[RMDB]
RNA sequence: GGGAACGACUCGAGUAGAGUCGAAAACUAUUUAUAGACAGAACAGUGGAAAACGUAUAUCGCUAUAAACCUUACACGCCGAGUCUUCCAGUCGUACUAUUCCACAUAGGCGAGGCAUAAGCGAAAGACCAUGCAUGCUGUUCGCAGCAUGCAUGGUAAAAGAAACAACAACAACAAC
Reactivity to DMS in 0.01 (KOAc 150mM, MgCl2 10mM, bicine 150mM(pH8.5), 24C), signal-to-noise 1, nucleotides 027 to 126: c010u000a050u030u000u000a020u070a030g000a040c070a080g000a050a030c180a070g020u000g080g040a000a110a060a050c100g000u000a050u000a160u100c000g060c100u040a060u000a060a020a020c100c000u000u000a110c150a050c120g010c190c030g050a130g060u000c030u020u000c000c060a050g000u010c030g040u000a000c030u000a060u040u000c040c010a000c130a180u000a010g000g000c120g000a020g050g000c030a020u110a140a010g000c070g000a030a120a150g030
Reactivity to 2A3 in 0.01 (KOAc 150mM, MgCl2 10mM, bicine 150mM(pH8.5), 24C), signal-to-noise 2, nucleotides 027 to 126: c040u010a070u030u140u010a150u050a010g050a020c030a010g100a010a010c010a000g110u050g160g000a160a050a010a000c000g000u040a100u010a000u280c000g000c020u010a010u030a040a070a050c000c010u070u060a070c030a000c170g010c020c020g010a050g000u040c010u010u000c000c000a070g030u060c000g000u000a040c010u000a000u020u090c000c080a010c030a040u000a010g050g000c000g000a020g000g070c000a070u130a130a050g000c080g050a050a020a020g070